[RMDB]
RNA sequence: GGGAACGACUCGAGUAGAGUCGAAAAAGCUGCUCAGUAUACGUACUGAGCAGCAAGGGGUUGAAGCGGACACCCCUUCAGGCGCGCGCCCAAGCUCCGUACGCCGCCUCAUACGUGAGGCGCCGAAAUAGGUGUAUCUGGUUCGCCAGAUACACAAGUAUUGUCAAUCCUUCGGGAUUGACAAUACAAAAGAAACAACAACAACAAC
Reactivity to 2A3 in 0.01 (KOAc 150mM, MgCl2 10mM, bicine 150mM(pH8.5), 24C), signal-to-noise 1, nucleotides 027 to 156: a000g010c000u010g010c000u000c000a000g000u010a020u000a050c190g020u000a040c030u000g000a000g010c000a000g000c020a000a000g030g000g000g000u050u130g170a260a020g020c000g010g000a000c000a000c000c020c010c000u020u130c040a030g000g000c000g000c030g010c030g040c130c000c040a010a010g010c100u000c000c010g000u010a140c050g030c010c000g000c000c000u010c040a100u050a110c240g050u000g030a000g010g020c000g000c030c000g070a000a030a010u240a090g120g000u010g000u000a000u000c000u000g000g030u010u000c170g000c070c010a000g020a000u000a000c000a000c000a000a000
Description: An RNA of 207 nucleotides, treated with 2A3 and read out base by base. It was measured as part of the RMDB library M2RFPK. Conditions: 150 mM KOAc, 10 mM MgCl2 and 150 mM bicine (pH 8.5), 24 C.